[RMDB]
RNA sequence: GGGAACGACUCGAGUAGAGUCGAAAAUGGACAUCAGCGCGUGAGCGGUCGUCAUCGUGAGGUUGCUCAGCAGGGCGUCGUCGCUGACGUCGACCGCGUUGGCCCGAACAUGCGCGAUGGGCCGCAAUCGCCGUCUAAGUUUCGACUUAGACGGCGAAAAAGAAACAACAACAACAAC
Reactivity to DMS in 0.01 (KOAc 150mM, MgCl2 10mM, bicine 150mM(pH8.5), 24C), signal-to-noise 2, nucleotides 027 to 126: u020g000g010a100c000a020u000c020a120g060c040g020c000g050u000g000a170g020c000g000g010u010c110g010u000c010a030u000c020g000u000g000a080g040g030u000u000g000c020u000c030a100g000c130a140g020g010g010c070g020u000c050g020u000c090g010c080u020g000a020c160g010u020c000g000a020c000c000g010c000g000u000u000g000g040c000c030c010g010a060a090c010a020u010g000c020g030c020g000a000u000g000g010g030c010c000g010c180a080a090
Reactivity to 2A3 in 0.01 (KOAc 150mM, MgCl2 10mM, bicine 150mM(pH8.5), 24C), signal-to-noise 1, nucleotides 027 to 126: u110g030g000a000c010a030u000c050a080g020c000g010c020g010u040g030a020g010c000g030g010u080c080g020u030c000a010u010c000g010u040g100a170g080g070u130u110g020c020u000c080a030g030c040a070g070g040g030c070g120u110c060g040u070c020g080c070u060g000a000c070g020u140c010g020a010c030c000g040c000g050u020u070g020g020c000c000c000g010a010a000c040a030u060g020c020g010c000g000a000u000g000g080g060c010c010g070c010a020a070